[RMDB]
RNA sequence: GGGAACGACUCGAGUAGAGUCGAAAAGAGGAUUCAACGAGCUUCGUAGCAACGAUAGCAACGUAGCUUUUGCUACGACCCAAGCUAUCGAGGGUAGCUACGUCCCUUGCUCGAGGGGAGAAUCCGAAGUAGUAGUCACCUUCGGGUGACUACUACUAAAAGAAACAACAACAACAAC
Reactivity to 2A3 in 0.01 (KOAc 150mM, MgCl2 10mM, bicine 150mM(pH8.5), 24C), signal-to-noise 2, nucleotides 027 to 126: g060a010g020g000a000u010u020c030a100a080c060g060a010g040c080u140u110c020g000u020a010g000c030a110a040c010g000a000u000a020g020c000a110a060c020g010u000a000g000c010u100u150u210u300g010c000u020a030c010g130a160c020c010c010a030a030g000c010u000a010u000c000g020a080g000g110g050u100a080g000c030u040a010c010g040u050c010c030c000u010u150g030c000u000c010g020a050g030g050g030g000a130g000a020a010u010c010c000g000a000
Reactivity to DMS in 0.01 (KOAc 150mM, MgCl2 10mM, bicine 150mM(pH8.5), 24C), signal-to-noise 2, nucleotides 027 to 126: g020a270g000g000a010u000u010c020a100a160c120g000a080g000c060u020u000c010g020u000a000g000c010a120a280c060g010a020u000a030g000c030a160a240c050g010u000a000g000c000u000u000u000u010g010c010u030a000c010g030a170c160c160c100a090a120g000c000u000a000u010c010g000a090g010g020g000u000a110g020c000u000a010c040g000u010c030c040c070u000u000g020c000u000c020g000a060g000g060g000g000a090g000a020a010u000c000c010g000a110